Notes
Chemical mapping of a 207-nucleotide RNA with 2A3.
RNA sequence: GGGAACGACUCGAGUAGAGUCGAAAAAUCACCGGUGGGGAACCCCAUACGGCAACGGCGUAGAAGUAAAUGCUAAACAAUCCGUGGUAUCUACGCGACGGAGCAUCCACGGAUAACUCUAACAAGGCUAAGCGUCUCGGUUUCGACCGAGACGCAAGACUUAAUUUAUGUUCGCAUAAAUUAAGUCAAAAGAAACAACAACAACAAC
Reactivity to 2A3 in 0.01 (KOAc 150mM, MgCl2 10mM, bicine 150mM(pH8.5), 24C), signal-to-noise 2, nucleotides 027 to 156: a000u060c010a000c000c010g020g020u030g000g000g000g190a090a130c020c030c020c000a060u140a140c000g010g000c040a100a040c020g020g000c000g000u010a000g010a060a020g020u070a020a040a100u120g020c120u140a100a050a100c080a080a040u000c000c000g000u010g010g000u030a010u010c010u000a010c000g000c010g060a070c080g160g020a000g000c000a010u020c000c000a000c000g000g000a010u000a010a020c030u060c010u120a120a080c110a110a020g110g000c070u140a110a040g040c020g020u000c000u050c010g050g070u020u120u090c100g040a020c000c010g000a000g000a000c000g000c000a000a000
For 2A3 the reverse transcriptase was SuperScript II with manganese. Conditions: 150 mM KOAc, 10 mM MgCl2 and 150 mM bicine (pH 8.5), 24 C. For 2A3, 1,185 sequencing reads were counted. The data come from the RNA Mapping Database (RMDB), library M2RFPK.